[RMDB]
RNA sequence: GGGAACGACUCGAGUAGAGUCGAAAAUUGCGAAAACGUUAGAUAUGUAUCCAAUUAAAAAUCUUGAGGAUUUAUACGAUAAAGAAGGAUAUCGAGAUGGAGAAUUUAAAAAGGGAGACAAAGGGACGACGUAACCAGAAUUCGUUCUGGUUACGUCAAAAGAAACAACAACAACAAC
Reactivity to DMS in 0.01 (KOAc 150mM, MgCl2 10mM, bicine 150mM(pH8.5), 24C), signal-to-noise 2, nucleotides 027 to 126: u010u020g010c090g000a070a080a110a110c080g020u000u010a040g010a100u030a060u020g010u020a030u010c000c040a090a060u010u060a010a070a030a050a010u030c030u000u000g010a180g000g000a050u000u020u010a100u010a200c170g000a060u000a040a080a080g030a090a120g000g000a090u050a010u000c000g000a030g000a080u000g030g030a050g000a070a090u010u020u000a040a010a020a070a030g000g010g010a050g010a020c060a030a070a040g000g000g060a080c150
Reactivity to 2A3 in 0.01 (KOAc 150mM, MgCl2 10mM, bicine 150mM(pH8.5), 24C), signal-to-noise 3, nucleotides 027 to 126: u050u090g030c070g030a100a030a020a020c060g060u090u100a140g020a120u140a060u080g040u050a060u000c000c010a030a030u160u080a130a120a010a000a000u040c090u080u180g160a050g000g050a040u000u060u000a070u020a060c030g050a050u060a160a040a050g100a060a010g070g000a010u060a010u060c040g010a000g040a080u040g010g000a040g030a090a170u140u180u100a210a070a060a040a000g050g000g020a130g000a010c090a030a080a000g080g000g010a030c070

Description: Structure probing data (DMS and 2A3) for a 177-nucleotide construct. Conditions: 150 mM KOAc, 10 mM MgCl2 and 150 mM bicine (pH 8.5), 24 C. Reactivities are given for positions 27 through 126. It was measured as part of the RMDB library OK1LIB.